Source: RMDB library OK3TST, as collected in RNAgym. Structure probing data (DMS and 2A3) for a 207-nucleotide construct. As a SHAPE reagent, 2A3 marks flexible, mostly unpaired nucleotides at the ribose 2'-OH. 2A3 adducts were read by reverse transcription with SuperScript II with manganese. Values cover nucleotides 27 to 156. The DMS profile rests on 2,689 reads.
RNA sequence: GGGAACGACUCGAGUAGAGUCGAAAAUGGAGUUGUAAAAGCUGCGGUGAAACUGCCUUUUAUUAUUACGGAGAAUCUUAAAUUUGAAGCUGCUCAGCUGGAACAAUUUUUCCUCUUGUUCAUUUUCUCUUAGAAAGUUAGUCUUGAGGGACUGUUCAAUUACUGUUUUGUUCGCAAAACAGUAAUUAAAAGAAACAACAACAACAAC
Reactivity to DMS in 0.01 (KOAc 150mM, MgCl2 10mM, bicine 150mM(pH8.5), 24C), signal-to-noise 2, nucleotides 027 to 156: u020g000g010a100g070u000u000g000u000a070a100a180a180g020c040u000g040c110g020g070u020g010a160a100a200c010u000g020c030c020u010u010u000u000a020u010u000a090u000u020a280c080g020g000a220g010a110a060u000c050u000u000a000a110a110u000u000u010g010a120a250g020c020u000g020c030u000c060a110g010c010u000g010g000a180a040c030a030a040u000u010u000u000u000c000c010u000c040u000u000g000u000u010c030a060u010u000u000u000c010u010c060u000u000a090g000a060a050a120g000u000u000a110g000u000c030u000u000g010a150g030g000g010a060c150u000g020u000u000c020
Reactivity to 2A3 in 0.01 (KOAc 150mM, MgCl2 10mM, bicine 150mM(pH8.5), 24C), signal-to-noise 1, nucleotides 027 to 156: u070g030g000a040g000u040u060g000u060a100a000a090a000g010c040u020g030c000g020g000u040g110a120a080a030c020u080g060c020c000u090u060u040u040a170u080u070a070u100u020a070c020g040g000a030g070a070a060u100c010u050u100a270a250a270u260u130u070g050a080a000g010c010u100g040c050u020c020a030g010c030u030g000g060a000a000c000a020a060u100u060u040u060u020c000c000u000c000u030u030g050u030u000c000a010u010u030u030u000c050u030c040u070u030a060g000a050a050a080g000u090u090a010g000u010c060u040u050g040a000g000g010g000a000c040u000g020u050u040c040